[RMDB]
RNA sequence: GGGAACGACUCGAGUAGAGUCGAAAAGAAGUUAUACGGCAGUUUCAGUGUUGUGUAGAGUGUGAGUUUUUACGUGUUUAUGCGUCACUGUAUACUGCUCGCUUAUUCUACAUAUGAUCCGUUAUAAGGCAGUAUCCAUGUUCGCAUGGAUACUGCCAAAAGAAACAACAACAACAAC
Reactivity to 2A3 in 0.01 (KOAc 150mM, MgCl2 10mM, bicine 150mM(pH8.5), 24C), signal-to-noise 1, nucleotides 027 to 126: g030a060a000g100u000u120a150u020a080c030g000g000c000a000g000u010u000u000c000a000g000u000g070u120u000g000u000g080u030a030g000a050g050u060g010u020g030a090g200u000u160u060u080u080a010c000g000u000g290u030u030u020a070u050g000c000g000u000c000a000c000u000g000u110a000u000a000c000u000g000c000u000c000g000c000u000u000a000u210u000c000u020a180c000a090u090a090u140g090a120u090c000c140g000u050u120a080u000a120a000
Background
Structure probing data (2A3) for a 177-nucleotide construct. It was measured as part of the RMDB library OK1LIB. For 2A3 the reverse transcriptase was SuperScript II with manganese.